[RMDB]
RNA sequence: GGGAACGACUCGAGUAGAGUCGAAAACAGGAACGCCAGGAGGCUCUCGUCGCUGUCCACCAGCCUGUGCAGCAGCAUGUCGCGGGUGAAGCCGGUGACCGGGCUAUCGAAGGCGACCAGCUUCUGGGCAGAUAUGAAAAUUCGUUUUCAUAUCUGCAAAAGAAACAACAACAACAAC
Reactivity to 2A3 in 0.01 (KOAc 150mM, MgCl2 10mM, bicine 150mM(pH8.5), 24C), signal-to-noise 6, nucleotides 027 to 126: c040a030g040g050a240a130c020g000c010c010a030g070g020a040g050g000c020u000c010u030c080g010u000c000g000c010u010g030u030c020c010a020c000c010a020g010c000c020u080g000u030g010c020a110g030c030a020g010c010a050u070g040u160c050g000c010g020g000g000u030g070a090a020g030c030c010g010g010u030g000a010c010c020g030g000g000c020u150a280u300c040g040a100a030g020g000c000g010a010c000c010a000g040c040u070u010c010u030g040g070
Reactivity to DMS in 0.01 (KOAc 150mM, MgCl2 10mM, bicine 150mM(pH8.5), 24C), signal-to-noise 7, nucleotides 027 to 126: c080a120g000g010a080a090c050g010c010c000a130g010g000a110g010g000c000u000c030u010c160g010u000c020g020c010u000g000u010c030c010a040c060c030a090g010c000c050u000g010u010g010c010a170g020c200a140g010c010a040u010g000u010c180g010c020g000g010g010u000g000a090a110g010c110c040g020g020u010g010a050c030c150g000g000g010c010u000a080u010c050g010a130a170g000g010c000g010a100c020c080a120g000c070u000u000c010u000g000g010